The record gives the reactivity of an RNA of 177 nucleotides to DMS and 2A3.
For DMS, 952 sequencing reads were counted.
For DMS the reverse transcriptase was MarathonRT.
It was measured as part of the RMDB library OK1LIB.
The reactions ran in a buffer of 150 mM KOAc, 10 mM MgCl2 and 150 mM bicine (pH 8.5), at 24 C.

[RMDB]
RNA sequence: GGGAACGACUCGAGUAGAGUCGAAAAGCCACCGCCACCACUCCCCCGGCGGCCAGCAUUACUGCGGCUGCCAACUGCGUGGGCGCCAUCGCGCGCAGCGCCAGCGCCGUGGGGUCGGCAGUGGGCGCGCACGCCCUCGAUUCGUCGAGGGCGUGCGAAAAGAAACAACAACAACAAC
Reactivity to DMS in 0.01 (KOAc 150mM, MgCl2 10mM, bicine 150mM(pH8.5), 24C), signal-to-noise 1, nucleotides 027 to 126: g000c000c040a050c050c260g000c030c000a040c180c080a210c190u000c000c000c000c020c300g000g000c010g040g000c000c020a060g130c050a040u010u040a120c300u030g030c000g070g010c060u000g000c040c020a000a040c000u000g010c030g000u000g000g000g000c000g100c000c010a110u010c040g020c040g000c000g030c030a230g000c030g000c000c000a200g000c050g020c000c000g000u000g000g000g000g120u010c220g000g000c010a000g040u000g140g030g000c070g050
Reactivity to 2A3 in 0.01 (KOAc 150mM, MgCl2 10mM, bicine 150mM(pH8.5), 24C), signal-to-noise 2, nucleotides 027 to 126: g020c000c010a000c020c010g030c030c020a070c070c030a080c080u110c010c000c000c000c000g000g000c000g020g000c010c020a110g010c020a030u100u300a220c080u190g000c010g010g000c020u020g000c000c000a010a010c020u030g000c000g080u060g080g040g000c000g000c010c010a180u110c040g060c010g000c010g000c050a000g010c020g000c010c020a000g050c010g050c000c020g100u250g000g000g000g000u040c080g010g030c000a000g000u000g020g010g000c010g000